[RMDB]
RNA sequence: GGGAACGACUCGAGUAGAGUCGAAAACUCUGUCCGGGAAGAUCUGGAGAAUCGGUCUGAUGGGAUUCAACUCUAGGAAGGAGAUCGCGCUGCAGGUGGCAGCAGCCCUGAAGGAUGCUCUCAUGGCCAUUCUACAAUUCUUCGGAAUUGUAGAAUGAAAAGAAACAACAACAACAAC
Reactivity to DMS in 0.01 (KOAc 150mM, MgCl2 10mM, bicine 150mM(pH8.5), 24C), signal-to-noise 9, nucleotides 027 to 126: c030u000c030u000g010u000c020c030g010g010g000a090a100g000a050u010c030u010g010g000a090g010a080a070u000c090g010g010u000c030u000g010a170u010g000g000g010a090u000u000c110a080a120c040u000c020u000a090g010g010a110a120g000g000a100g010a070u000c100g010c140g020c030u000g010c030a100g010g020u010g010g010c050a040g000c040a070g010c030c020c030u000g010a140a100g000g000a070u000g010c100u000c030u000c050a070u010g010g000c120
Reactivity to 2A3 in 0.01 (KOAc 150mM, MgCl2 10mM, bicine 150mM(pH8.5), 24C), signal-to-noise 7, nucleotides 027 to 126: c020u000c030u040g060u000c010c020g040g020g020a040a040g010a080u040c030u130g060g030a060g050a060a080u110c070g040g050u020c040u070g070a080u100g070g030g000a020u110u090c040a060a070c020u000c010u070a050g100g070a100a030g040g030a080g010a070u090c050g020c010g000c070u020g000c020a050g140g190u090g160g000c010a010g010c010a010g010c030c000c000u020g030a060a020g050g010a020u060g010c010u000c000u020c050a070u080g050g000c020